[RMDB]
RNA sequence: GGGAACGACUCGAGUAGAGUCGAAAAAAGUCUAUAUGCCCACCUUUGCUAAAUCGGGUGGAUGUUCUAAGUGUAUAUAGAUGCCUAUAUUUGAAAUAAUAUAGAUGCCCAAACUCUCUCUCAUGGAGAGAGAAUGGAUGCGUACGAAGGUUAUGCAGUAGCACCUAAAUUUCGAUUUAGGUGCUACAAAAGAAACAACAACAACAAC
Reactivity to DMS in 0.01 (KOAc 150mM, MgCl2 10mM, bicine 150mM(pH8.5), 24C), signal-to-noise 1, nucleotides 027 to 156: a090a150g000u010c010u000a010u000a010u000g000c030c000c040a000c010c000u010u010u020g050c090u020a060a090a110u010c140g000g000g020u010g010g010a050u000g010u000u010c040u000a160a110g060u020g050u030a040u000a030u000a010g040a070u000g000c080c010u000a010u010a000u010u000u020g000a090a120a100u000a050a050u000a010u000a040g010a240u010g000c030c010c030a060a040a230c000u000c010u000c000u000c000u010c160a150u000g010g020a040g010a000g000a000g020a010a110u010g010g030a110u000g010c050g000u000a080c040g000a150a090g010g020u000u000a030u000g000c000a190
Chemical mapping of a 207-nucleotide RNA with DMS.